Description:
Structure probing data (DMS and 2A3) for a 177-nucleotide construct. The data come from the RNA Mapping Database (RMDB), library OK2TRN. 2A3 adducts were read by reverse transcription with SuperScript II with manganese. The reactions ran in a buffer of 150 mM KOAc, 10 mM MgCl2 and 150 mM bicine (pH 8.5), at 24 C. For 2A3, 1,905 sequencing reads were counted.
[RMDB]
RNA sequence: GGGAACGACUCGAGUAGAGUCGAAAAGAGGAUUCAACGAGCUUCGUAGCAACGAUAGCAACGUAGCUUUUGCUACGACCCAAGCUAUCGAGGGAAGCUACGUCCCGUGCUCGAGGGAAGAAUCCGAAUACCCUACCUCGUUCGCGAGGUAGGGUAUAAAAGAAACAACAACAACAAC
Reactivity to DMS in 0.01 (KOAc 150mM, MgCl2 10mM, bicine 150mM(pH8.5), 24C), signal-to-noise 2, nucleotides 027 to 126: g020a220g000g000a030u020u000c010a110a200c100g000a020g020c040u000u000c010g020u000a010g000c010a170a210c040g010a010u010a040g000c000a040a090c010g010u000a000g030c000u000u000u000u000g020c000u000a010c000g000a110c180c070c200a100a170g010c020u000a000u000c020g020a110g020g000g010a110a060g000c020u000a020c020g000u020c190c130c130g000u010g000c060u000c010g000a120g040g000g010a160a160g010a030a020u000c000c000g000a110
Reactivity to 2A3 in 0.01 (KOAc 150mM, MgCl2 10mM, bicine 150mM(pH8.5), 24C), signal-to-noise 2, nucleotides 027 to 126: g100a040g000g020a010u000u000c010a060a040c020g040a010g010c010u120u080c040g030u000a010g000c030a050a050c000g000a010u000a010g000c020a050a140c010g000u010a000g000c010u100u190u230u300g000c000u000a020c030g150a170c080c060c000a030a020g000c000u000a000u000c000g010a070g040g240g010a100a050g000c000u030a020c010g020u060c030c030c000g020u080g000c020u030c010g060a090g100g100g030a010a280g000a000a060u000c000c000g000a000